[RMDB]
RNA sequence: GGGAACGACUCGAGUAGAGUCGAAAAGAUAUGGAACUGAACGGGAGAAGUUCGGAAACGAAUACUUCAUCGAUCGUUAGUUCCUAAGUCAAAGAUUUUGCGACAACUUCGGUUGUCGCAAAAUCAACAUAUGCAAGCUGUUCGCAGCUUGCAUAUGAAAAGAAACAACAACAACAAC
Reactivity to DMS in 0.01 (KOAc 150mM, MgCl2 10mM, bicine 150mM(pH8.5), 24C), signal-to-noise 3, nucleotides 027 to 126: g000a030u000a300u000g000g000a010a000c000u000g010a010a010c000g000g000g010a080g000a030a020g020u010u000c010g000g010a070a070a210c010g000a030a060u000a050c010u000u000c010a210u000c130g000a080u010c010g010u000u000a020g010u000u000c000c000u000a030a070g020u010c040a090a110a140g000a010u000u000u000u010g000c000g000a010c000a010a000c010u000u010c200g020g000u000u000g020u000c000g000c000a010a000a000a000u000c000a070a200
Reactivity to 2A3 in 0.01 (KOAc 150mM, MgCl2 10mM, bicine 150mM(pH8.5), 24C), signal-to-noise 2, nucleotides 027 to 126: g020a000u070a030u160g000g010a000a000c010u070g060a090a010c030g000g000g010a060g020a020a010g000u040u030c040g000g050a070a080a010c030g010a020a050u160a280c020u030u040c020a300u230c050g150a100u060c000g030u020u020a010g000u010u020c010c010u020a090a030g060u040c060a150a110a000g000a010u000u050u000u000g000c010g020a000c000a000a030c000u060u070c200g190g000u000u000g000u000c000g000c000a010a000a010a000u000c000a000a010